The record gives the reactivity of an RNA of 177 nucleotides to 2A3 and DMS.
Conditions: 150 mM KOAc, 10 mM MgCl2 and 150 mM bicine (pH 8.5), 24 C.
It was measured as part of the RMDB library RFM100.
Reactivities are rounded to 0.1 and cut off at 0 and 3.
Values cover nucleotides 27 to 126.

RNA sequence: GGGAACGACUCGAGUAGAGUCGAAAAGCAGGAUUAGCGAUGUGUAAUGACAACAUCAAAGUUUGGCCCAUGCUUCUUUAACCUGUGUAUCAUGGCAUCUUUACCCUAACAUGCAUGCUUAAAGCACUGACGCUUAGUCGUUCGCGACUAAGCGUCAAAAAGAAACAACAACAACAAC
Reactivity to 2A3 in 0.01 (KOAc 150mM, MgCl2 10mM, bicine 150mM(pH8.5), 24C), signal-to-noise 2, nucleotides 027 to 126: g050c010a010g020g020a060u070u120a000g000c000g110a030u000g030u010g000u030a110a120u090g120a070c020a020a050c000a000u030c000a000a210a000g050u140u100u020g020g000c000c000c000a000u030g040c000u080u000c000u000u000u060a090a110c000c000u050g000u010g030u060a030u080c010a020u120g090g020c000a000u170c030u020u060u150a060c000c050c000u010a010a030c020a050u100g010c000a020u050g020c000u120u180a190a020a000g000c000a050c090
Reactivity to DMS in 0.01 (KOAc 150mM, MgCl2 10mM, bicine 150mM(pH8.5), 24C), signal-to-noise 1, nucleotides 027 to 126: g010c000a180g050g000a170u000u000a100g000c290g000a030u070g000u000g000u010a100a160u150g030a110c060a030a010c000a020u000c050a050a070a030g000u000u000u000g000g000c000c000c030a080u000g010c050u000u010c000u000u000u010a030a150c040c040u000g000u000g000u010a140u000c040a020u000g000g000c000a000u000c010u000u010u060a040c010c100c080u000a080a040c170a060u000g000c130a040u000g010c070u000u010a000a070a110g060c210a000c210